[RMDB]
RNA sequence: GGGAACGACUCGAGUAGAGUCGAAAACGACCCUGACCUAAAGUAAAUUCCUAGGAGAACUGUUUUCCUGGGUUUUGAAUUUGCAGUAACAGGUGUGAACAUUCUAGCAGCAGUUUGAUGAUCAUGUAGUUCUAAUAGACUUCGGUCUAUUAGAACUAAAAGAAACAACAACAACAAC
Reactivity to DMS in 0.01 (KOAc 150mM, MgCl2 10mM, bicine 150mM(pH8.5), 24C), signal-to-noise 3, nucleotides 027 to 126: c150g000a140c040c020c010u010g020a110c040c060u000a030a080a100g010u010a110a020a020u010u000c000c000u000a020g000g000a010g020a040a240c230u020g020u020u000u000u000c000c000u000g000g010g000u010u000u010u010g010a110a120u000u010u010g020c110a050g020u010a060a110c120a010g000g010u010g000u010g020a060a060c090a060u010u010c030u020a060g010c060a040g010c080a040g010u000u010u000g000a050u010g000a070u000c060a060u030g010u030
Reactivity to 2A3 in 0.01 (KOAc 150mM, MgCl2 10mM, bicine 150mM(pH8.5), 24C), signal-to-noise 4, nucleotides 027 to 126: c040g100a070c010c000c000u000g070a070c000c010u050a130a030a000g000u020a000a020a040u050u010c000c000u000a000g010g010a030g050a100a080c170u140g140u180u090u050u020c000c000u000g000g000g000u000u000u000u020g000a010a000u030u030u100g040c040a040g030u080a100a020c000a060g010g040u030g030u040g090a040a020c010a070u060u110c080u110a030g020c030a010g000c010a030g020u020u140u170g100a090u030g030a060u100c040a030u120g080u110